Conditions: 150 mM KOAc, 10 mM MgCl2 and 150 mM bicine (pH 8.5), 24 C. Structure probing data (DMS and 2A3) for a 177-nucleotide construct. 2A3 is a SHAPE reagent: it acylates the 2'-hydroxyl of flexible nucleotides of all four kinds. Reactivities are rounded to 0.1 and cut off at 0 and 3. 2A3 adducts were read by reverse transcription with SuperScript II with manganese. Source: RMDB library VIROID, as collected in RNAgym. For 2A3, 1,966 sequencing reads were counted.
RNA sequence: GGGAACGACUCGAGUAGAGUCGAAAAGGAGAAACCACCUCCAGAGGACCCCUUCAGCGAACAGAGGACCCUCUCACUCGAUAGGAGUAAGACCAUAGCGAUGGGGGGAGAUGCUAGGAGUUAGAGGCUACUAGCAAUACUUCGGUAUUGCUAGUAGAAAAGAAACAACAACAACAAC
Reactivity to DMS in 0.01 (KOAc 150mM, MgCl2 10mM, bicine 150mM(pH8.5), 24C), signal-to-noise 4, nucleotides 027 to 126: g000g000a090g000a120a140a160c050c060a140c160c010u000c010c010a070g020a120g000g000a280c090c030c010c020u000u010c050a060g000c030g020a170a120c130a100g000a080g010g010a150c110c030c050u000c010u000c040a020c070u000c040g010a110u000a060g010g000a050g000u020a060a070g010a090c080c050a070u000a050g000c010g000a060u000g000g000g000g000g000g000a030g010a200u030g000c030u010a100g020g000a140g020u000u020a060g010a090g020g010
Reactivity to 2A3 in 0.01 (KOAc 150mM, MgCl2 10mM, bicine 150mM(pH8.5), 24C), signal-to-noise 1, nucleotides 027 to 126: g030g000a030g050a070a160a010c010c010a020c020c000u000c020c010a030g010a050g020g070a100c000c000c000c030u020u050c010a000g000c000g040a100a040c030a060g070a140g090g010a040c000c020c010u000c000u000c000a030c020u060c020g130a170u120a100g130g030a050g040u060a040a020g080a050c000c030a100u060a040g040c040g020a040u050g000g030g020g000g000g030a040g010a050u090g030c020u040a050g010g020a010g020u080u080a100g010a030g160g000